[RMDB]
RNA sequence: GGGAACGACUCGAGUAGAGUCGAAAACUAGCAGAAAUGAAGUCGAUUCAUUCUUGCAGAAAAACUUUUUCAUGGUAAAGAAUGAAUUCUUGUACCGAUUAUCACCUUCUUACAUAUGUUCAAUUAUUGACUGGAUAUUUGUUAUAGCCCAACAGUACAUUAUAAUCGGGUUCGCCCGAUUAUAAUGAAAAGAAACAACAACAACAAC
Reactivity to DMS in 0.01 (KOAc 150mM, MgCl2 10mM, bicine 150mM(pH8.5), 24C), signal-to-noise 3, nucleotides 027 to 156: c080u000a070g020c020a270g000a070a100a040u000g000a090a060g010u000c080g010a110u000u000c010a030u000u000c000u010u000g010c020a230g000a040a050a060a130a200c100u000u020u000u010u000c050a120u010g020g030u010a060a070a040g000a070a050u000g000a070a050u000u010c050u000u000g030u010a060c050c020g000a210u000u000a070u010c040a060c030c020u000u010c050u000u000a060c080a100u000a040u000g060u000u000c030a020a080u000u000a150u000u010g010a050c040u010g000g000a040u000a060u000u000u000g030u010u000a100u000a130g000c010c010c020a030a300c030a100g010u000a080
Reactivity to 2A3 in 0.01 (KOAc 150mM, MgCl2 10mM, bicine 150mM(pH8.5), 24C), signal-to-noise 7, nucleotides 027 to 156: c030u050a020g020c030a020g040a080a100a090u090g020a100a010g040u060c030g030a020u000u010c000a000u010u000c010u000u020g000c020a020g090a030a050a030a060a090c040u190u160u040u050u040c090a110u160g080g030u160a130a070a040g010a010a020u030g010a020a020u100u060c070u120u150g060u120a060c030c020g090a060u050u070a090u180c020a040c030c020u070u060c030u060u080a030c020a030u140a030u070g020u030u070c020a070a080u150u100a120u170u280g080a070c050u010g020g000a020u020a050u080u100u020g040u050u080a080u090a090g030c010c020c000a020a040c030a040g060u060a020

Structure probing data (DMS and 2A3) for a 207-nucleotide construct. The reactions ran in a buffer of 150 mM KOAc, 10 mM MgCl2 and 150 mM bicine (pH 8.5), at 24 C. For DMS, 5,941 sequencing reads were counted.